Conditions: 150 mM KOAc, 10 mM MgCl2 and 150 mM bicine (pH 8.5), 24 C. This 177-nucleotide RNA was probed chemically with 2A3.
[RMDB]
RNA sequence: GGGAACGACUCGAGUAGAGUCGAAAAUACCACAAGAAUGUGGCGCUCCGCGGUUGGUGAGCAUGCUCGGUCCGUCCGAGAAGCCUUAAAACUGCGACGACACAUUCACCUUGAACCAAGGCGUGUACCACGAGUACGCGUUCGCGCGUACUCGUGGAAAAGAAACAACAACAACAAC
Reactivity to 2A3 in 0.01 (KOAc 150mM, MgCl2 10mM, bicine 150mM(pH8.5), 24C), signal-to-noise 1, nucleotides 027 to 126: u160a010c000c010a010c000a100a040g000a000a020u000g000u020g000g000c000g000c040u000c030c000g000c000g000g000u000u000g000g000u000g040a250g010c000a000u260g000c000u000c000g070g000u150c040c160g140u050c040c000g060a000g000a000a050g000c000c000u170u250a050a100a000a000c000u070g020c000g210a190c000g000a000c010a000c000a000u010u000c000a030c020c000u060u070g090a080a100c000c000a000a090g140g000c110g080u110g020u000a090
Reactivities are rounded to 0.1 and cut off at 0 and 3. 2A3 adducts were read by reverse transcription with SuperScript II with manganese. Source: RMDB library RFM100, as collected in RNAgym.